[RMDB]
RNA sequence: GGGAACGACUCGAGUAGAGUCGAAAAACUAGUAUCUACAGGGGUAAGUUGACCUGUCAUCUAGACAACUUACCAGGUACUCAAAGGUAAGUUGGUUGAGUACCACAGAGUACGAACUAAGUACUCAGACUUAGGAUGCCUUCGGGUAUCUUAAGUCAAAAGAAACAACAACAACAAC
Reactivity to DMS in 0.01 (KOAc 150mM, MgCl2 10mM, bicine 150mM(pH8.5), 24C), signal-to-noise 9, nucleotides 027 to 126: a070c020u000a030g000u010a080u010c020u000a050c090a090g010g000g000g010u000a010a010g000u000u000g000a080c080c020u000g000u030c240a140u040c140u020a030g000a160c000a010a000c000u000u000a000c000c000a100g000g010u000a000c010u000c010a010a020a040g000g010u020a080a090g010u020u010g000g050u000u000g000a020g010u000a010c000c000a180c170a100g000a040g010u000a000c050g000a060a090c120u010a060a080g010u000a020c010u000c010a110
Reactivity to 2A3 in 0.01 (KOAc 150mM, MgCl2 10mM, bicine 150mM(pH8.5), 24C), signal-to-noise 8, nucleotides 027 to 126: a000c030u030a020g080u050a150u090c010u060a050c030a070g080g050g000g000u020a020a010g010u040u030g090a130c010c020u030g060u070c030a080u060c030u070a030g090a160c000a000a000c000u000u000a000c000c000a020g000g000u010a010c010u000c020a040a030a010g130g030u130a050a110g120u090u080g050g000u020u010g020a000g000u010a010c000c020a010c040a040g020a000g000u010a010c040g060a110a060c060u090a190a010g000u010a010c000u000c020a000